[RMDB]
RNA sequence: GGGAACGACUCGAGUAGAGUCGAAAAAUGGGCUCUUCUGUGGGAGCUGCGUUAAUUGAUUUAUUCAGAUAGCCUCCUGGGUUGGACUAAUUGAGUAACUAAGAAUCUGAUUGCUAAUUACCUGUGCCGUUGGGUAGUUAUUCGUAACUACCCAACGAAAAGAAACAACAACAACAAC
Reactivity to 2A3 in 0.01 (KOAc 150mM, MgCl2 10mM, bicine 150mM(pH8.5), 24C), signal-to-noise 1, nucleotides 027 to 126: a000u040g000g030g080c000u000c000u000u030c080u120g150u180g040g040g000a080g000c030u060g130c040g050u040u110a150a150u110u020g040a050u100u190u190a060u100u040c010a000g050a070u040a000g000c010c010u070c000c010u140g050g170g000u090u140g000g000a030c010u060a050a050u010u150g020a050g040u000a050a040c080u050a060a030g010a120a080u030c020u080g040a090u020u060g000c020u020a110a030u110u110a120c040c000u030g040u060g120c080
Reactivity to DMS in 0.01 (KOAc 150mM, MgCl2 10mM, bicine 150mM(pH8.5), 24C), signal-to-noise 2, nucleotides 027 to 126: a050u010g010g010g040c010u000c020u010u000c140u000g040u020g020g010g010a010g020c030u000g000c050g040u000u000a070a150u000u010g010a090u000u000u000a050u010u000c020a070g000a120u000a060g010c030c040u000c070c020u010g020g000g000u000u000g000g000a080c050u000a060a090u010u000g010a040g010u010a020a050c130u010a070a080g000a070a080u000c070u010g000a120u000u010g010c060u000a080a060u000u000a070c040c030u000g010u000g040c140
About this RNA: The record gives the reactivity of an RNA of 177 nucleotides to 2A3 and DMS. The DMS profile rests on 1,913 reads. The 2A3 profile rests on 608 reads. Conditions: 150 mM KOAc, 10 mM MgCl2 and 150 mM bicine (pH 8.5), 24 C.